The record gives the reactivity of an RNA of 177 nucleotides to DMS and 2A3.
The RNA was probed in 150 mM KOAc, 10 mM MgCl2 and 150 mM bicine (pH 8.5) at 24 C.
For 2A3, 2,691 sequencing reads were counted.
The data come from the RNA Mapping Database (RMDB), library OK2TST.
As a SHAPE reagent, 2A3 marks flexible, mostly unpaired nucleotides at the ribose 2'-OH.
Reactivities are given for positions 27 through 126.
RNA sequence: GGGAACGACUCGAGUAGAGUCGAAAAGGGGGUAAUGAAAUCAGCAUCUGCAUCCCUCGUCAUGCCAGCCAUCAAUUUCAGUUGCUUAUGUCCUGACUAAAAGUAAGAUGUGAUACCCAGGGUGACGCCCAUAAAACUUUUUCGAAAGUUUUAUGGGAAAAGAAACAACAACAACAAC
Reactivity to DMS in 0.01 (KOAc 150mM, MgCl2 10mM, bicine 150mM(pH8.5), 24C), signal-to-noise 4, nucleotides 027 to 126: g000g010g000g010g020u010a070a120u010g000a070a110a070u000c140a080g000c080a060u000c010u010g020c140a110u010c010c020c020u000c080g000u000c070a060u000g010c010c030a090g010c060c040a040u000c060a070a100u010u000u010c070a070g030u000u000g010c060u000u000a120u010g010u000c040c020u000g000a070c100u010a050a050a050a110g000u000a050a050g000a050u010g000u010g010a110u010a090c030c010c030a100g010g000g000u000g020a110c180g000
Reactivity to 2A3 in 0.01 (KOAc 150mM, MgCl2 10mM, bicine 150mM(pH8.5), 24C), signal-to-noise 3, nucleotides 027 to 126: g020g020g000g000g010u060a040a050u100g050a080a080a060u070c030a030g060c010a030u020c030u060g000c020a050u100c010c000c000u000c000g040u020c010a020u090g090c030c010a010g020c020c020a050u040c030a050a120u030u110u100c030a030g040u070u030g050c020u070u080a060u180g060u040c000c020u010g080a080c030u080a210a020a020a010g050u070a030a040g010a040u030g020u010g040a030u060a090c000c020c010a000g000g050g000u000g010a030c030g010